[RMDB]
RNA sequence: GGGAACGACUCGAGUAGAGUCGAAAAUAGCAGACAAGAUGGCUGCCAUCCACAUGUCACCUUUCAUCUUGGUGAGGUCAAUGAGCAGCCGAGUCACAGGACAAGGAAGUAGACAUGCAGACAACAACUCACUGAGUCCUUUCGAGGACUCAGUGAGAAAAGAAACAACAACAACAAC
Reactivity to DMS in 0.01 (KOAc 150mM, MgCl2 10mM, bicine 150mM(pH8.5), 24C), signal-to-noise 2, nucleotides 027 to 126: u000a130g040c070a040g000a060c080a020a110g040a110u030g000g020c010u000g010c010c040a000u000c060c240a080c140a040u010g000u000c000a030c030c000u000u000u030c220a130u000c240u000u000g000g040u000g010a060g030g010u000c150a070a050u000g020a190g010c030a020g000c000c010g000a080g010u000c010a040c100a090g000g000a080c050a090a120g010g000a040a060g020u000a070g020a070c060a040u020g000c050a000g000a060c070a050a020c040a050a130